[RMDB]
RNA sequence: GGGAACGACUCGAGUAGAGUCGAAAAAUCUUGUUAGGUGAAAGUUGAUGGUCGCCGUGUCAGUCCAUGCCUUUGAAAACAGUUCUAUGUAGUAGGGAGUCGAGAACCUAUGAGAGUUAGAACUUGCUAUGCCUUGGACUCUUCGGAGUCCAAGGAAGGAAAUCCAUUACUUCGGUAAUGGAUUUCCAAAAGAAACAACAACAACAAC
Reactivity to 2A3 in 0.01 (KOAc 150mM, MgCl2 10mM, bicine 150mM(pH8.5), 24C), signal-to-noise 1, nucleotides 027 to 156: a000u010c020u010u070g000u070u120a040g010g020u050g050a160a050a000g050u070u020g040a110u040g070g030u000c040g010c020c010g050u000g000u010c020a030g000u010c020c000a050u080g010c020c050u120u050u160g060a010a030a000a060c090a020g010u010u010c010u010a040u080g050u090a010g000u000a020g000g020g040a050g070u050c040g050a010g030a210a050c000c010u020a040u040g040a090g000a000g050u040u000a010g000a050a040c000u000u030g020c040u090a100u170g030c000c000u020u000g000g000a000c000u010c000u000u040c150g090g030a000g000u000c000c000a000a000g010g000a000a000
Reactivity to DMS in 0.01 (KOAc 150mM, MgCl2 10mM, bicine 150mM(pH8.5), 24C), signal-to-noise 1, nucleotides 027 to 156: a070u000c010u000u000g000u000u000a100g010g010u010g020a020a050a080g060u000u010g030a130u000g040g010u010c030g070c020c030g030u010g020u010c040a070g010u010c040c030a070u010g010c020c060u020u000u010g000a100a050a070a090c030a010g010u000u010c030u000a020u000g040u000a230g020u000a090g000g000g000a080g010u000c230g010a250g000a150a130c010c010u000a020u000g000a270g000a190g010u000u010a000g030a050a060c020u000u040g000c010u000a120u000g000c000c010u000u000g000g000a030c010u000c000u010u010c300g010g000a020g050u020c010c000a000a000g010g000a010a060
This 207-nucleotide RNA was probed chemically with 2A3 and DMS. The DMS profile rests on 2,983 reads. For 2A3 the reverse transcriptase was SuperScript II with manganese.